[RMDB]
RNA sequence: GGGAACGACUCGAGUAGAGUCGAAAAUUUUCAAAUGGUUUUAUUUUAGGGAUAGAUCCCUUCUUUGCCAAUGGUAUUUCAGAUGACCCCCCAGUAUAUGAAAAAGAUGAAAGAGGAGCCACAGGUCAACAAGUACAAUCUUCGGAUUGUACUUGUUAAAAGAAACAACAACAACAAC
Reactivity to DMS in 0.01 (KOAc 150mM, MgCl2 10mM, bicine 150mM(pH8.5), 24C), signal-to-noise 2, nucleotides 027 to 126: u010u020u000u010c030a050a100a170u020g000g010u010u000u000u010a050u010u020u010u010a030g010g000g020a100u010a150g000a080u000c010c000c000u000u010c060u010u010u000g000c030c020a050a160u020g000g010u000a060u010u000u000c020a070g010a110u020g010a210c040c020c010c020c000c030a080g000u000a060u000a100u020g000a090a070a070a060a100g000a070u010g000a020a050a060g000a070g030g000a090g020c020c030a040c090a060g020g000u010c120
Source information: Structure probing data (DMS) for a 177-nucleotide construct. The reactions ran in a buffer of 150 mM KOAc, 10 mM MgCl2 and 150 mM bicine (pH 8.5), at 24 C.